[RMDB]
RNA sequence: GGGAACGACUCGAGUAGAGUCGAAAAGUCACCAUCAAGAUAGUGAGGGUCAGCACAGUGGCCUGCAAGUCAGAGUAAGCCUGGGAUGAGACUUCAGAGCUGCUCUUCUCAGACUGCAGCUCUGCUCCUCAGUUUCUACCUCCCAGAGUCUUGUGCACGUACGGAAUCAGUUCGCUGAUUCCGUACGAAAAGAAACAACAACAACAAC
Reactivity to DMS in 0.01 (KOAc 150mM, MgCl2 10mM, bicine 150mM(pH8.5), 24C), signal-to-noise 2, nucleotides 027 to 156: g030u000c000a080c010c060a130u000c100a140a110g020a200u000a050g010u000g000a120g010g020g040u000c040a070g010c060a070c130a090g020u000g010g000c030c020u010g060c060a090a100g000u000c070a120g000a100g000u000a060a060g000c000c010u000g000g020g030a140u000g010a060g020a090c000u000u010c020a050g010a050g040c020u000g010c010u000c030u000u000c160u010c210a080g010a030c050u030g040c000a010g010c000u000c010u000g000c030u010c010c000u000c010a110g010u000u010u000c070u000a100c080c040u000c010c010c000a050g010a090g000u000c000u000u000g010u000g000c010a230
Reactivity to 2A3 in 0.01 (KOAc 150mM, MgCl2 10mM, bicine 150mM(pH8.5), 24C), signal-to-noise 2, nucleotides 027 to 156: g090u040c010a060c160c000a070u150c070a070a050g070a170u170a090g080u070g110a050g020g010g000u030c040a010g070c030a030c030a120g050u060g040g010c000c020u040g000c040a090a100g040u110c060a030g000a050g180u140a030a010g000c000c000u000g020g010g000a030u030g010a030g020a020c000u040u010c060a000g000a000g010c000u010g000c000u020c000u180u100c120u000c040a030g000a110c110u110g000c000a000g000c000u010c020u000g010c020u070c010c000u120c040a000g000u000u040u000c040u040a090c010c020u000c030c010c000a020g010a020g010u010c020u080u080g000u030g000c020a000